[RMDB]
RNA sequence: GGGAACGACUCGAGUAGAGUCGAAAACACGAAUGAAGAACUGGCCAUCGCCCGCGAUUGCCUGAGGGUGCUGGGCGGACGCCGAGCGUGAAUCAUACGACAGCCCGCCGGCGUGUCGCGUCGUGCGGCAGACGGGUUGAUUCGUCAACCCGUCUGCAAAAGAAACAACAACAACAAC
Reactivity to DMS in 0.01 (KOAc 150mM, MgCl2 10mM, bicine 150mM(pH8.5), 24C), signal-to-noise 2, nucleotides 027 to 126: c030a050c070g020a060a070u040g000a110a050g070a080a200c080u000g000g010c030c050a030u000c020g010c000c000c010g010c020g020a080u030u020g000c070c060u000g080a120g000g000g000u000g010c030u020g000g010g000c010g050g000a030c070g010c010c010g000a140g000c060g000u000g000a160a130u020c080a090u010a100c090g000a050c210a180g020c000c020c000g000c000c030g000g000c010g030u000g000u010c040g000c040g010u000c000g000u030g030c090g000
Reactivity to 2A3 in 0.01 (KOAc 150mM, MgCl2 10mM, bicine 150mM(pH8.5), 24C), signal-to-noise 5, nucleotides 027 to 126: c070a020c020g110a090a120u250g040a080a100g110a160a060c070u070g060g000c000c010a050u020c000g040c030c020c030g130c050g100a130u080u160g030c010c020u060g010a120g030g050g040u130g010c020u090g010g050g000c000g000g050a010c010g000c010c030g030a040g000c020g010u090g020a050a040u100c040a070u110a200c090g050a050c060a020g060c010c000c010g010c000c000g000g000c020g000u070g050u100c030g000c020g080u050c010g020u050g050c030g040
An RNA of 177 nucleotides, treated with DMS and 2A3 and read out base by base. For DMS, 3,795 sequencing reads were counted. For DMS the reverse transcriptase was MarathonRT. The reactions ran in a buffer of 150 mM KOAc, 10 mM MgCl2 and 150 mM bicine (pH 8.5), at 24 C.